[RMDB]
RNA sequence: GGGAACGACUCGAGUAGAGUCGAAAAGAGCCCGUUGCAUUUUAUUUUCGAGCUUUCUUCUUUGCCGCCUGCUCGUAUUGCUGGACCGUUUCUUUGGCGGCUUUUUCGGUCCUAUUCGGGCUCGAGAGGGACCGUACGGCUUCGGCCGUGUGGUCCCAAAAGAAACAACAACAACAAC
Reactivity to DMS in 0.01 (KOAc 150mM, MgCl2 10mM, bicine 150mM(pH8.5), 24C), signal-to-noise 3, nucleotides 027 to 126: g000a030g010c020c000c010g030u010u010g010c020a080u040u050u060u030a030u040u020u050u000c020g010a020g020c020u020u050u060c130u050u030c140u030u020u020g030c030c000g010c010c030u010g000c010u000c000g020u030a050u020u010g000c060u010g000g010a030c030c010g010u010u030u020c090u020u020u010g000g010c010g010g000c020u000u000u010u000u000c000g000g000u000c000c000u010a110u030u000c010g010g000g020c010u000c000g000a110g010a170
Reactivity to 2A3 in 0.01 (KOAc 150mM, MgCl2 10mM, bicine 150mM(pH8.5), 24C), signal-to-noise 4, nucleotides 027 to 126: g010a000g010c000c000c010g010u040u100g000c040a040u040u080u140u160a150u090u240u100u140c010g000a010g000c010u060u190u060c020u240u060c040u060u160u150g010c010c000g020c020c010u030g000c000u000c010g040u060a180u040u160g010c030u020g010g020a010c000c000g020u010u130u200c160u060u090u060g020g000c000g010g000c000u050u020u000u020u030c000g000g000u020c000c000u010a030u020u120c000g010g000g020c000u000c000g000a010g010a010
This 177-nucleotide RNA was probed chemically with DMS and 2A3.
In probing experiments dimethyl sulfate is read out at A N1 and C N3, which are open when not base-paired.
The reactions ran in a buffer of 150 mM KOAc, 10 mM MgCl2 and 150 mM bicine (pH 8.5), at 24 C.